Chemical mapping of a 207-nucleotide RNA with DMS and 2A3.
The RNA was probed in 150 mM KOAc, 10 mM MgCl2 and 150 mM bicine (pH 8.5) at 24 C.
DMS (dimethyl sulfate) methylates the pairing face of unpaired adenines and cytosines.
Source: RMDB library M2RFPK, as collected in RNAgym.
The DMS profile rests on 2,063 reads.

RNA sequence: GGGAACGACUCGAGUAGAGUCGAAAAAGCGUAGCGGUACGCCGCUACGCAAGGCGCAUUUGAACUGUAUUGUACGCCUUGCAUAAAGCAAAAGUACUAAAAAAACGUCCCGUUACGACGGCACGAAAAAACAUCCAUUGGUUCGCCAAUGGAUGAAUCAAGUAGCUGAGUUCGCUCAGCUACUUGAAAAAGAAACAACAACAACAAC
Reactivity to DMS in 0.01 (KOAc 150mM, MgCl2 10mM, bicine 150mM(pH8.5), 24C), signal-to-noise 1, nucleotides 027 to 156: a090g060c040g020u000a010g020c040g000g000u000a100c210g040c040c030g020c000u000a010c000g030c000a000a060g000g000c000g000c020a060u000u000u020g010a130a100c110u040g000u000a300u000u000g040u010a000c000g000c000c010u000u000g000c010a130u000a090a050a130g000c020a020a070a180a110g040u000a290c090u020a010a040a100a080a030a090a080c010g040u000c070c020c020g080u000u000a070c090g000a090c000g020g080c080a070c060g030a000a010a100a090a060a090c010a030u000c000c000a000u010u000g040g030u000u020c300g000c020c010a010a000u000g020g000a000u000g000a020a050
Reactivity to 2A3 in 0.01 (KOAc 150mM, MgCl2 10mM, bicine 150mM(pH8.5), 24C), signal-to-noise 4, nucleotides 027 to 156: a000g020c010g000u000a000g010c000g000g010u030a040c170g030c030c010g010c000u000a010c000g000c000a000a010g000g000c010g000c020a060u100u100u250g160a220a110c120u150g040u230a110u140u100g030u050a010c010g000c000c000u000u010g000c030a090u150a170a150a040g020c020a010a000a030a020g050u030a040c100u190a030a050a070a050a020a010a040c000g020u040c010c010c000g000u020u030a050c200g040a000c000g040g020c000a010c020g090a080a090a010a000a000a020c010a000u000c000c000a000u000u000g010g010u070u040c140g010c070c000a000a010u000g000g000a000u000g000a000a000